[RMDB]
RNA sequence: GGGAACGACUCGAGUAGAGUCGAAAACAUGUCGCGUGAUAUGGCGAGUACGUUCACCAUUGUCGCGAUUGGGACGUAUUGCCCGGCGGUGAUUGCGCCGCUGAUGCCUAACCGGUUACAGGCCUGAUCUUCCUUUACGGUUCGCCGUAAAGGAAGAAAAAGAAACAACAACAACAAC
Reactivity to 2A3 in 0.01 (KOAc 150mM, MgCl2 10mM, bicine 150mM(pH8.5), 24C), signal-to-noise 5, nucleotides 027 to 126: c040a060u140g030u030c020g000c030g070u070g070a070u020a020u170g030g000c020g020a000g050u100a080c110g070u060u020c070a080c090c010a020u020u070g100u080c040g000c010g090a040u050u060g000g010g020a020c040g050u080a070u060u230g050c000c010c000g010g000c000g000g000u060g080a300u120u300g070c090g000c030c000g000c000u020g000a020u100g010c000c020u050a070a080c030c020g070g000u060u080a050c040a060g060g050c000c020u060g040a080
Reactivity to DMS in 0.01 (KOAc 150mM, MgCl2 10mM, bicine 150mM(pH8.5), 24C), signal-to-noise 5, nucleotides 027 to 126: c100a070u010g020u000c030g020c040g040u000g000a060u000a040u000g010g020c040g010a070g020u000a050c220g010u010u010c030a110c010c010a030u000u010g010u000c110g010c070g010a030u000u000g010g010g000a050c060g000u000a040u000u000g010c040c050c020g010g000c010g000g010u010g010a280u010u010g010c110g020c020c000g000c010u010g010a090u000g010c010c040u010a110a180c140c060g010g000u000u010a080c120a070g010g000c030c050u000g000a130
The record gives the reactivity of an RNA of 177 nucleotides to 2A3 and DMS. High DMS reactivity at an A or C suggests that its Watson-Crick edge is free. As a SHAPE reagent, 2A3 marks flexible, mostly unpaired nucleotides at the ribose 2'-OH. The 2A3 profile rests on 4,994 reads. The data come from the RNA Mapping Database (RMDB), library OK2TST. 2A3 adducts were read by reverse transcription with SuperScript II with manganese. For DMS, 6,784 sequencing reads were counted.